About this RNA: This 177-nucleotide RNA was probed chemically with DMS and 2A3. As a SHAPE reagent, 2A3 marks flexible, mostly unpaired nucleotides at the ribose 2'-OH. Conditions: 150 mM KOAc, 10 mM MgCl2 and 150 mM bicine (pH 8.5), 24 C. In probing experiments dimethyl sulfate is read out at A N1 and C N3, which are open when not base-paired. For DMS the reverse transcriptase was MarathonRT. The data come from the RNA Mapping Database (RMDB), library OK1LIB.

[RMDB]
RNA sequence: GGGAACGACUCGAGUAGAGUCGAAAAGUCAAGCUCACAAAGAAGACCCAAGCCACCCUGCUGAAUAAUGCCGAUCGCGCUGAUGCCGACUGGCGCCACACGUUCGUCCGCAUUUUCAUCAAGUCGCUCGGUAGCCCUAAUUCGUUAGGGCUACCGAAAAAGAAACAACAACAACAAC
Reactivity to DMS in 0.01 (KOAc 150mM, MgCl2 10mM, bicine 150mM(pH8.5), 24C), signal-to-noise 1, nucleotides 027 to 126: g000u010c100a040a040g000c060u040c170a020c070a070a000a020g010a060a130g000a050c000c020c030a130a030g050c050c000a050c000c040c000u000g080c040u030g000a150a140u130a100a020u010g000c000c050g070a060u020c020g000c110g070c060u000g090a020u040g020c000c050g010a040c180u030g000g000c020g000c000c040a000c150a030c020g010u000u000c040g000u000c050c000g000c000a040u010u000u000u020c080a100u000c030a050a000g000u050c090g000c140
Reactivity to 2A3 in 0.01 (KOAc 150mM, MgCl2 10mM, bicine 150mM(pH8.5), 24C), signal-to-noise 3, nucleotides 027 to 126: g100u060c030a010a030g000c000u010c060a030c050a020a110a000g120a070a080g030a140c010c000c010a030a020g030c000c000a020c050c010c010u040g010c040u030g050a060a100u200a130a070u110g000c000c000g070a090u040c040g000c000g000c030u090g000a030u150g000c000c000g010a100c080u060g010g020c020g000c000c000a040c000a000c000g030u050u060c030g020u020c020c000g070c050a060u060u070u040u040c060a090u080c030a060a080g090u080c020g000c050